[RMDB]
RNA sequence: GGGAACGACUCGAGUAGAGUCGAAAAUAUCGACCCCGGCGCUAUUGAAUACCCGUGUAUGGCGUUGCUGACACGGACGAGCACUGCCAUGUCGGGCGGUGUUUCAAGUCCUAGCGUGGGCUAGAAAAGUCUCUGGUCCUUUCGAGGAUCAGGGGCUAAAAGAAACAACAACAACAAC
Reactivity to DMS in 0.01 (KOAc 150mM, MgCl2 10mM, bicine 150mM(pH8.5), 24C), signal-to-noise 3, nucleotides 027 to 126: u020a190u030c040g030a300c300c050c000c010g030g060c010g050c030u040a060u060u110g000a210a210u090a130c100c000c030g020u000g000u030a020u020g020g020c040g000u020u010g030c010u000g000a070c080a020c070g010g030a110c100g030a200g000c000a000c010u000g000c010c030a130u020g000u040c150g020g000g020c010g000g000u000g000u000u000u020c010a070a090g000u020c060c260u010a060g030c070g080u030g000g040g050c020u010a300g000a070a230a250
Reactivity to 2A3 in 0.01 (KOAc 150mM, MgCl2 10mM, bicine 150mM(pH8.5), 24C), signal-to-noise 4, nucleotides 027 to 126: u280a030u040c050g050a030c000c000c000c000g090g000c000g000c010u010a030u110u300g070a150a070u110a130c010c000c020g010u010g010u040a290u060g000g010c040g070u040u190g010c000u010g010a000c000a000c030g020g020a020c020g000a000g000c010a000c010u000g000c000c000a060u130g140u180c060g020g000g010c000g000g000u010g000u020u080u020c010a030a010g030u010c010c020u010a000g000c010g000u080g000g050g020c000u030a020g080a070a160a010
This 177-nucleotide RNA was probed chemically with DMS and 2A3. For 2A3 the reverse transcriptase was SuperScript II with manganese. DMS adducts were read by reverse transcription with MarathonRT. The 2A3 profile rests on 3,334 reads. For DMS, 2,820 sequencing reads were counted. Conditions: 150 mM KOAc, 10 mM MgCl2 and 150 mM bicine (pH 8.5), 24 C.